Structure probing data (2A3 and DMS) for a 177-nucleotide construct. The RNA was probed in 150 mM KOAc, 10 mM MgCl2 and 150 mM bicine (pH 8.5) at 24 C. In probing experiments dimethyl sulfate is read out at A N1 and C N3, which are open when not base-paired.
RNA sequence: GGGAACGACUCGAGUAGAGUCGAAAAGCACGUCGGUUCAGAUGAUGGGCCCGCAUCUGUACGAAAGUGAGACGAAAGUCCAGCCGACGUGCAUGAGCACGCGGGCCCCGUGCUCGGCAGCAAAAGACCAUAUGAUACCAUUCGUGGUAUCAUAUGGAAAAGAAACAACAACAACAAC
Reactivity to 2A3 in 0.01 (KOAc 150mM, MgCl2 10mM, bicine 150mM(pH8.5), 24C), signal-to-noise 9, nucleotides 027 to 126: g010c000a000c000g000u010c000g000g020u080u090c020a010g010a040u030g020a030u060g010g000g010c000c000c000g010c000a000u000c000u040g100u130a080c080g150a110a060a050g080u080g040a180g000a040c010g050a130a030a010g000u000c000c000a000g000c000c000g000a000c000g000u000g000c000a000u020g000a000g000c010a000c020g010c060g000g000g000c000c000c000c000g000u000g000c000u010c000g080g040c070a130g020c040a070a040a060a030g080a040
Reactivity to DMS in 0.01 (KOAc 150mM, MgCl2 10mM, bicine 150mM(pH8.5), 24C), signal-to-noise 4, nucleotides 027 to 126: g000c000a000c000g010u000c000g000g000u000u000c000a000g000a000u000g000a050u050g010g010g000c010c000c000g000c000a000u000c000u000g020u010a010c020g000a110a080a080g010u000g000a060g010a010c010g000a110a110a150g000u000c000c010a030g000c000c000g000a030c000g010u010g010c010a000u020g030a050g000c000a000c000g010c170g010g000g000c000c000c000c000g010u000g000c000u000c030g010g000c110a090g020c130a070a060a090a070g000a250